RNA sequence: GGGAACGACUCGAGUAGAGUCGAAAAUGAAAGACAAACCAAGGACAAAGGAAAAUACCAUAACACAUGAAUAAGGGAAAAAGGAAAACCAAGGAAACCAACGAAUACGAAAGGAAUUAAAGAAAAAGGAGUAUAACUUGUUCGCAAGUUAUACUCCAAAAGAAACAACAACAACAAC
Reactivity to DMS in 0.01 (KOAc 150mM, MgCl2 10mM, bicine 150mM(pH8.5), 24C), signal-to-noise 1, nucleotides 027 to 126: u000g000a100a030a140g020a040c070a030a090a190c030c040a070a100g000g010a090c200a040a110a080g020g000a030a010a040a060u000a050c050c020a080u000a080a100c090a140c130a020u000g000a060a020u020a030a030g000g000g010a000a000a060a060a080g020g000a020a050a100a030c100c090a050a070g000g000a040a040a110c030c030a030a050c050g000a070a070u000a080c120g000a020a020a050g000g000a040a070u000u030a010a050a090g000a020a010a030a080a120
Reactivity to 2A3 in 0.01 (KOAc 150mM, MgCl2 10mM, bicine 150mM(pH8.5), 24C), signal-to-noise 1, nucleotides 027 to 126: u070g000a000a020a030g100a000c000a020a010a040c010c010a020a040g000g010a020c030a080a050a020g010g040a100a040a000a000u090a020c030c020a050u130a110a040c050a000c010a030u050g120a280a030u090a100a060g000g010g000a050a030a000a000a030g030g000a020a060a000a000c010c020a010a010g010g000a050a000a040c000c000a040a000c000g020a030a020u140a070c020g050a090a040a040g050g000a050a020u110u080a160a060a060g040a070a090a000a000a020
The record gives the reactivity of an RNA of 177 nucleotides to DMS and 2A3. Reactivities are rounded to 0.1 and cut off at 0 and 3. For DMS the reverse transcriptase was MarathonRT. The RNA was probed in 150 mM KOAc, 10 mM MgCl2 and 150 mM bicine (pH 8.5) at 24 C. It was measured as part of the RMDB library M2PK90. For 2A3, 950 sequencing reads were counted.